[RMDB]
RNA sequence: GGGAACGACUCGAGUAGAGUCGAAAAUCGCUACAAGGCGUGGUGUCCCAGCUCAACGAACUGGAUUUCUCCGGGCGGGUAGAUGCCCUCCUGGCGCAGUACAACCAGGGCGAAGACAUCGACCUGGGCGCGUGUUAUGUUUCGACAUAACACGCGCAAAAGAAACAACAACAACAAC
Reactivity to DMS in 0.01 (KOAc 150mM, MgCl2 10mM, bicine 150mM(pH8.5), 24C), signal-to-noise 2, nucleotides 027 to 126: u000c040g000c040u000a060c270a210a080g000g040c000g030u010g000g060u000g000u000c010c020c010a210g000c080u000c050a150a050c110g000a040a030c040u010g000g010a150u000u000u000c020u000c020c040g040g010g020c090g000g000g040u010a080g000a170u030g000c010c000c000u000c010c000u000g000g040c110g020c030a030g010u010a080c090a050a300c010c090a100g000g000g020c010g000a180a200g020a090c110a080u000c020g000a110c010c000u000g000g000
Reactivity to 2A3 in 0.01 (KOAc 150mM, MgCl2 10mM, bicine 150mM(pH8.5), 24C), signal-to-noise 1, nucleotides 027 to 126: u020c020g030c030u050a070c060a130a140g130g000c030g090u100g010g010u010g070u090c000c000c010a020g000c050u060c030a080a160c100g050a040a030c010u050g140g000a160u090u220u130c060u000c000c000g000g000g020c000g020g050g020u110a150g130a300u300g020c000c000c000u010c000c000u020g030g040c010g020c000a000g000u080a080c020a070a100c050c000a000g000g010g000c000g000a050a030g120a040c030a100u050c020g050a060c010c020u000g070g060

This 177-nucleotide RNA was probed chemically with DMS and 2A3. In probing experiments dimethyl sulfate is read out at A N1 and C N3, which are open when not base-paired. The data come from the RNA Mapping Database (RMDB), library OK2TST. The 2A3 profile rests on 1,045 reads. Reactivities are given for positions 27 through 126.